[RMDB]
RNA sequence: GGGAACGACUCGAGUAGAGUCGAAAAGAUAUGGAACAGACCCAUGCCUAAGAGCUUGGACCUCGGAAACGAGCUAGCUCGAUGGCAUGCUGUUCCUAAGUCAAAGCUAGGCCUUCGGGCCUAGCAACAGUGUUUAACGCUUCGGCGUUAAACACUGAAAAGAAACAACAACAACAAC
Reactivity to 2A3 in 0.01 (KOAc 150mM, MgCl2 10mM, bicine 150mM(pH8.5), 24C), signal-to-noise 1, nucleotides 027 to 126: g000a000u030a010u080g000g000a010a010c000a020g030a260c030c210c060a000u010g020c030c000u270a300a040g000a020g070c020u130u180g110g120a260c040c030u000c030g000g030a060a050a000c010g010a020g000c010u010a000g010c000u020c080g020a070u240g010g050c020a000u000g020c000u010g000u000u000c000c000u010a040a000g030u020c040a000a060a120g000c000u010a000g000g000c020c040u030u140c300g040g030g050c000c020u010a010g000c010a000a010
Reactivity to DMS in 0.01 (KOAc 150mM, MgCl2 10mM, bicine 150mM(pH8.5), 24C), signal-to-noise 2, nucleotides 027 to 126: g020a070u000a270u020g010g000a000a020c000a000g000a280c240c280c060a000u000g000c000c000u020a190a210g000a000g000c000u010u010g050g000a070c300c010u000c010g000g000a020a020a130c000g000a000g010c020u000a000g000c010u000c000g000a200u010g010g010c000a000u000g000c000u000g030u000u000c000c000u010a040a070g000u000c020a120a130a170g000c020u000a010g000g000c000c000u010u020c200g020g010g040c000c000u000a000g010c000a040a060